The record gives the reactivity of an RNA of 177 nucleotides to DMS and 2A3. Conditions: 150 mM KOAc, 10 mM MgCl2 and 150 mM bicine (pH 8.5), 24 C.

[RMDB]
RNA sequence: GGGAACGACUCGAGUAGAGUCGAAAAGGUUUCACCUUCGGGUGAAACCAAAUAAUAGUCGCUAGAAAACGAUCAUAACUAGCGACUUACAUAACGAUCGAAAAAGAAUGGUGUUCGCACCAUUCAAGAUAGGGUGUUAGUUCGCUAACACCCUAUCAAAAGAAACAACAACAACAAC
Reactivity to DMS in 0.01 (KOAc 150mM, MgCl2 10mM, bicine 150mM(pH8.5), 24C), signal-to-noise 2, nucleotides 027 to 126: g020g010u000u000u000c000a000c000c000u010u000c190g040g030g060u000g000a000a000a000c000c000a010a060a070u010a130a100u000a000g000u000c000g010c000u010a010g000a060a030a130a060c000g000a000u010c010a080u010a090a200c000u000a000g000c000g040a020c000u000u010a010c190a130u010a070a080c240g030a020u010c020g000a100a030a050a110a180g000a010a010u000g000g040u010g010u000u010c180g040c030a000c000c000a000u000u000c000a070a080
Reactivity to 2A3 in 0.01 (KOAc 150mM, MgCl2 10mM, bicine 150mM(pH8.5), 24C), signal-to-noise 2, nucleotides 027 to 126: g010g010u010u000u010c000a000c010c000u030u080c240g080g000g000u000g000a000a000a000c010c000a000a000a000u020a010a010u030a010g000u010c000g010c000u000a000g060a080a080a040a080c050g010a020u020c010a020u050a090a070c010u010a000g030c000g000a000c000u000u020a000c000a020u120a120a080c060g020a020u050c020g020a060a060a000a040a020g010a010a010u010g000g000u020g030u040u060c190g030c070a000c000c000a000u000u020c000a000a000

For 2A3 the reverse transcriptase was SuperScript II with manganese.